[RMDB]
RNA sequence: GGGAACGACUCGAGUAGAGUCGAAAAUACUGGCGGCUGGUGGAUGUCGUCUUCGCGCCCGACGACCCCGUCCUCCUCUGCGGGGAUCCUCUCGACGAGCAGUGUAGACGGCGGAAGAUCUGGAGGACGUAACAUGAUCAUUCGUGAUCAUGUUACGAAAAGAAACAACAACAACAAC
Reactivity to DMS in 0.01 (KOAc 150mM, MgCl2 10mM, bicine 150mM(pH8.5), 24C), signal-to-noise 4, nucleotides 027 to 126: u000a110c100u010g010g020c030g010g020c030u000g000g020u000g010g010a110u000g000u000c020g010u000c020u000u000c060g020c070g020c010c020c030g010a080c090g000a110c010c030c010c020g000u000c060c040u000c020c010u000c060u010g010c020g010g010g010g000a060u000c040c020u000c090u000c060g010a140c080g000a080g010c030a090g030u000g010u000a040g000a050c040g010g000c010g000g020a070a070g000a070u000c080u000g000g020a050g000g000a130
Reactivity to 2A3 in 0.01 (KOAc 150mM, MgCl2 10mM, bicine 150mM(pH8.5), 24C), signal-to-noise 2, nucleotides 027 to 126: u110a010c030u030g080g000c010g050g000c040u050g000g070u060g060g030a070u070g020u030c000g000u010c000u020u070c010g010c010g000c000c000c020g010a030c050g020a010c010c000c000c000g010u000c000c020u000c000c000u010c020u020g010c030g050g000g000g000a080u030c010c020u040c000u030c020g100a100c040g010a040g000c070a030g020u010g010u100a020g020a040c020g000g020c000g030g020a080a040g040a090u040c080u120g000g000a010g010g030a020